Chemical mapping of a 177-nucleotide RNA with DMS and 2A3. It was measured as part of the RMDB library OK2TST. For 2A3, 1,284 sequencing reads were counted. Reactivities are given for positions 27 through 126. For 2A3 the reverse transcriptase was SuperScript II with manganese. The DMS profile rests on 886 reads. The reactions ran in a buffer of 150 mM KOAc, 10 mM MgCl2 and 150 mM bicine (pH 8.5), at 24 C.
RNA sequence: GGGAACGACUCGAGUAGAGUCGAAAACAACUACCAGGACGAGGUCGUCGGCGUAAUAACCAAAACCGACCUCCUGCACUUACUGGUGGAAGAGCUGGAGGCGGCCGGCUAAUUCUUAACCUCCACCUCCGUCAUAUCGAUUCGUCGAUAUGACGGAAAAAGAAACAACAACAACAAC
Reactivity to DMS in 0.01 (KOAc 150mM, MgCl2 10mM, bicine 150mM(pH8.5), 24C), signal-to-noise 2, nucleotides 027 to 126: c090a050a110c070u010a080c000c020a010g010g000a040c180g000a110g010g000u000c140g020u000c070g000g040c060g090u010a100a080u000a010a040c170c120a090a040a170a170c090c000g000a120c010c050u010c010c000u030g000c090a170c190u010u000a110c050u000g000g040u010g000g070a050a060g010a150g010c060u000g010g000a050g020g020c030g010g000c070c090g000g000c000u000a080a070u000u000c060u000u000a080a070c050c050u000c000c010a060c040c030
Reactivity to 2A3 in 0.01 (KOAc 150mM, MgCl2 10mM, bicine 150mM(pH8.5), 24C), signal-to-noise 1, nucleotides 027 to 126: c020a020a030c040u050a080c020c020a000g040g060a040c060g070a000g020g010u040c020g020u020c000g020g000c040g010u110a040a090u050a100a030c050c020a000a100a030a000c030c010g080a120c010c000u000c000c000u040g000c060a020c050u140u220a040c000u040g000g040u010g040g000a080a090g060a020g000c050u080g010g010a000g000g040c040g060g000c040c000g060g000c020u050a000a090u180u020c030u060u150a070a030c000c030u020c000c000a030c000c000